[RMDB]
RNA sequence: GGGAACGACUCGAGUAGAGUCGAAAAUUGCUAUCAAUGGUGCGGACGGUGAGGCUGAAAAGUUUUUUGAUCCACUUGUUAUGUCUACUUCUGAAGGCUACCCUUUCACAUUGACUAGAACAGGAGGUCCUUCACAUGCGUUCGCGCAUGUGAAGGAAAAAGAAACAACAACAACAAC
Reactivity to DMS in 0.01 (KOAc 150mM, MgCl2 10mM, bicine 150mM(pH8.5), 24C), signal-to-noise 1, nucleotides 027 to 126: u010u000g000c100u010a060u010c060a110a090u040g000g000u000g000c030g020g000a040c050g010g000u000g000a030g000g050c070u000g000a090a070a130a080g020u000u000u000u030u000u000g000a190u010c040c040a020c020u010u000g020u000u000a050u010g000u010c020u000a070c120u000u020c050u000g000a070a050g000g000c180u000a090c220c100c000u000u000u000c060a040c090a140u000u000g060a060c160u000a100g000a020a030c050a060g010g010a090g020g000